[RMDB]
RNA sequence: GGGAACGACUCGAGUAGAGUCGAAAAGAUAUGGAGCCUGUGGUUAGAGUAGGGCAUCGGAAACGAUGCGCCGCAGAUACUAACGUAACAUCAGGCUCCUAAGUCAAAAGAGUACUUCGGUACUCAAUCAAGUCGUACAGUUCGCUGUACGACUUGAAAAAGAAACAACAACAACAAC
Reactivity to DMS in 0.01 (KOAc 150mM, MgCl2 10mM, bicine 150mM(pH8.5), 24C), signal-to-noise 2, nucleotides 027 to 126: g000a100u000a300u000g000g000a040g040c000c000u010g040u000g010g000u000u000a040g000a130g000u000a070g040g000g000c010a000u000c000g010g010a150a130a120c000g000a000u000g000c010g020c010c000g010c130a150g000a050u000a020c010u000a010a020c000g010u000a060a120c250a010u000c010a000g000g010c000u000c000c000u000a010a110g000u000c030a070a100a130a190g000a010g010u000a000c000u000u010c160g030g030u000a020c000u000c000a110a080
Reactivity to 2A3 in 0.01 (KOAc 150mM, MgCl2 10mM, bicine 150mM(pH8.5), 24C), signal-to-noise 1, nucleotides 027 to 126: g000a010u050a020u120g000g000a010g000c010c000u040g040u090g050g100u000u070a030g000a050g080u070a140g020g000g000c020a020u000c020g030g090a050a010a010c000g030a020u020g020c210g300c020c000g000c040a020g090a020u130a050c040u050a080a010c050g150u080a000a080c000a120u300c030a010g000g000c000u000c010c000u000a000a030g010u020c020a000a000a090a130g000a000g010u010a010c020u040u080c140g070g020u000a020c020u080c010a020a100